Notes
Source: RMDB library OK2TST, as collected in RNAgym. An RNA of 177 nucleotides, treated with 2A3 and DMS and read out base by base. For 2A3 the reverse transcriptase was SuperScript II with manganese. Conditions: 150 mM KOAc, 10 mM MgCl2 and 150 mM bicine (pH 8.5), 24 C. Reactivities are rounded to 0.1 and cut off at 0 and 3.
RNA sequence: GGGAACGACUCGAGUAGAGUCGAAAAAGGGUGAAAGAAUGUAACUGUCAUCGAUUUUGCCAAAAUAGCGCACCAAUCCGGUUGCGCUGGCGGGAAUGGCACGCCCAGUCUGACCGGUUAAACGGCAGGUAUCCACCUGGUUCGCCAGGUGGAUACCAAAAGAAACAACAACAACAAC
Reactivity to 2A3 in 0.01 (KOAc 150mM, MgCl2 10mM, bicine 150mM(pH8.5), 24C), signal-to-noise 1, nucleotides 027 to 126: a030g070g000g010u040g060a100a120a130g120a110a180u170g040u150a090a120c070u030g010u000c010a010u020c010g050a060u040u040u070u200g000c000c000a090a010a020a210u250a040g000c000g010c000a000c040c030a040a030u230c160c170g030g000u070u090g000c000g000c020u010g000g010c010g000g000g100a150a150u020g000g040c010a000c010g000c000c010c000a000g010u040c030u050g150a300c000c040g000g040u020u150a070a150a080c020g020g000c040a040
Reactivity to DMS in 0.01 (KOAc 150mM, MgCl2 10mM, bicine 150mM(pH8.5), 24C), signal-to-noise 2, nucleotides 027 to 126: a120g020g000g000u010g000a080a080a090g000a110a160u000g000u010a130a120c130u000g030u000c020a000u000c090g020a210u010u000u000u000g010c030c020a030a130a090a200u030a000g030c010g000c010a020c000c020a090a120u000c300c160g000g010u000u000g040c070g030c020u000g050g030c000g010g000g000a150a050u000g000g020c010a090c160g000c110c000c010a110g010u000c070u000g000a120c030c030g000g030u000u080a110a200a200c050g000g000c060a010
The 2A3 profile rests on 876 reads.